[RMDB]
RNA sequence: GGGAACGACUCGAGUAGAGUCGAAAAUUAACUUAGCAGCAAGCUCAGCGCCUCAAAGUCGAAGGGAAACCUUUGGCUAGUAUCUGGGUGUAGAUUUCACCUAAGUGCAACACUGUUCAAAUUGCGGGAAAGCCCUAAAGCUUUGCUAACCAAGCUGGUUACGUACAGUGUUCGCACUGUACGUAACAAAAGAAACAACAACAACAAC
Reactivity to 2A3 in 0.01 (KOAc 150mM, MgCl2 10mM, bicine 150mM(pH8.5), 24C), signal-to-noise 4, nucleotides 027 to 156: u100u050a040a030c030u050u100a010g010c030a010g000c010a090a010g000c000u010c030a010g010c000g040c060c030u070c060a140a120a020g010u010c000g010a010a000g000g000g010a030a050a060c000c000u000u020u010g020g000c010u010a020g010u030a040u050c080u070g000g030g000u010g000u040a060g100a300u080u210u100c000a010c000c000u040a140a010g020u040g050c020a040a020c030a010c120u060g020u040u020c020a030a110a150u090u070g030c030g000g030g010a080a110a060g040c000c030c030u170a160a110a000g000c000u070u100u100g030c010u020a030a020c040c020a030a010g030c030u090g020
Reactivity to DMS in 0.01 (KOAc 150mM, MgCl2 10mM, bicine 150mM(pH8.5), 24C), signal-to-noise 1, nucleotides 027 to 156: u010u000a030a090c060u010u010a070g010c050a060g030c060a060a090g010c100u000c020a110g000c060g020c020c000u000c090a080a050a020g020u000c010g010a000a030g000g020g000a210a120a240c020c010u000u000u000g020g000c050u000a090g000u000a090u000c030u010g000g000g000u020g080u010a100g030a160u010u000u000c040a060c020c000u000a030a060g020u000g010c010a040a050c040a080c010u020g010u000u000c040a050a050a120u010u010g030c040g000g000g000a070a060a160g000c000c010c050u010a040a060a060g010c010u000u000u010g010c000u000a040a110c000c040a050a110g000c110u030g000